An RNA of 177 nucleotides, treated with 2A3 and DMS and read out base by base. 2A3 adducts were read by reverse transcription with SuperScript II with manganese. For DMS, 1,007 sequencing reads were counted. Values cover nucleotides 27 to 126.
RNA sequence: GGGAACGACUCGAGUAGAGUCGAAAACGGCCCAGCGGGUAGCAGACCGGCGGACGCGGUGCCCGCGGAUCCCGGGUGCUGCGGCUUAUGGAGGCGGCCCUCCCAAGAGCGGCGGCCGCAGAGGCAUCCUCACCAUCUGAUUCGUCAGAUGGUGAGGAAAAGAAACAACAACAACAAC
Reactivity to 2A3 in 0.01 (KOAc 150mM, MgCl2 10mM, bicine 150mM(pH8.5), 24C), signal-to-noise 2, nucleotides 027 to 126: c040g080g030c010c000c000a010g040c040g040g050g010u060a030g030c030a010g030a220c000c000g060g060c090g040g030a010c030g010c010g000g080u090g070c020c000c010g020c030g000g030a040u050c000c000c010g010g000g000u010g000c000u010g040c010g030g000c010u070u090a090u160g040g050a050g110g000c050g000g000c030c010c000u030c010c010c010a090a030g070a000g090c130g030g000c040g010g020c000c010g000c050a010g060a040g030g010c020a060u050
Reactivity to DMS in 0.01 (KOAc 150mM, MgCl2 10mM, bicine 150mM(pH8.5), 24C), signal-to-noise 1, nucleotides 027 to 126: c130g000g030c000c000c070a040g000c040g000g010g040u020a010g060c020a010g020a110c010c040g020g000c060g000g000a080c020g040c040g030g010u000g010c110c010c030g010c070g000g030a150u000c150c050c030g000g000g130u010g000c010u000g000c010g000g000c010u010u010a180u100g000g000a150g000g010c030g030g020c010c000c000u010c020c010c070a120a150g000a120g020c200g000g010c300g000g090c000c000g030c100a000g000a170g000g070c050a090u060